RNA sequence: GGGAACGACUCGAGUAGAGUCGAAAAGAUAUGGACUGAAUUUCUGGCCAAAUUUUCCCGAAGAGACUUGCUCGGAAACGAGCAAGAGGAGGGAAAAUUUGGAACUACCAGGUUCAGUCCUAAGUCAUCUUAAGGGAAUGUUCGCAUUCCCUUAAGAAAAAGAAACAACAACAACAAC
Reactivity to DMS in 0.01 (KOAc 150mM, MgCl2 10mM, bicine 150mM(pH8.5), 24C), signal-to-noise 1, nucleotides 027 to 126: g000a040u010a300u030g000g020a010c000u020g030a020a010u000u020u010c010u000g000g000c020c010a000a040a030u000u000u000u000c010c010c020g000a110a200g000a180g000a030c000u010u000g000c000u000c000g000g020a070a110a250c000g000a020g000c000a000a000g010a050g030g000a060g020g010g000a020a010a010a020u000u000u010g000g000a030a020c060u000a300c000c010a010g010g000u000u000c000a020g000u020c000c000u000a000a080g000u000c030a170